This 177-nucleotide RNA was probed chemically with DMS. Source: RMDB library TTRDEL, as collected in RNAgym. Conditions: 150 mM KOAc, 10 mM MgCl2 and 150 mM bicine (pH 8.5), 24 C. For DMS, 874 sequencing reads were counted. Reactivities are given for positions 27 through 126. High DMS reactivity at an A or C suggests that its Watson-Crick edge is free.
[RMDB]
RNA sequence: GGGAACGACUCGAGUAGAGUCGAAAAGAUAUGGAGAAGUCUCCGAUAAGCUGCACUCGGAAACGAGUGAUAGCUUUUGACGGAGUCACUCCUAAGUCAAACCAAGUUGAGUUCGCUCAACUUGGAAUCGUACAAACUCGUUCGCGAGUUUGUACGAAAAAGAAACAACAACAACAAC
Reactivity to DMS in 0.01 (KOAc 150mM, MgCl2 10mM, bicine 150mM(pH8.5), 24C), signal-to-noise 1, nucleotides 027 to 126: g010a030u000a160u030g020g010a010g010a060a120g010u000c000u000c000c000g000a140u000a000a000g010c000u000g000c010a000c010u000c020g010g010a100a070a090c000g010a030g000u000g000a050u010a010g000c000u000u000u000u050g010a120c110g010g000a010g010u000c080a250c000u000c000c000u000a010a090g000u010c020a110a060a210c000c010a000a010g010u000u000g000a030g020u010u010c280g010c000u000c000a000a010c000u010u010g010g020a000a020